An RNA of 177 nucleotides, treated with DMS and read out base by base. The DMS profile rests on 851 reads.
[RMDB]
RNA sequence: GGGAACGACUCGAGUAGAGUCGAAAACAGAGUUGCGAACCGAAGAGAAAGUGAACAUGAACAAAACUAGAACAUUCACAGCAGCACCUCUUGAUACCUUAUUGGGUGGUAAAGUUUGCGUUGAUGAAAGGAUGGGUCAAUUCGUUGACCCAUCCUUAAAAGAAACAACAACAACAAC
Reactivity to DMS in 0.01 (KOAc 150mM, MgCl2 10mM, bicine 150mM(pH8.5), 24C), signal-to-noise 1, nucleotides 027 to 126: c100a050g000a060g000u000u000g000c010g030a180a110c030c000g020a260a010g010a120g000a030a140a120g010u080g000a020a030c190a050u000g000a090a050c140a060a040a150a100c100u000a060g000a040a130c170a030u000u020c180a040c010a040g000c100a040g000c050a000c040c000u010c000u010u010g020a000u040a020c060c070u000u010a090u000u000g000g000g000u000g040g000u000a000a030a180g040u000u080u000g000c190g080u040u000g080a050u000g000a120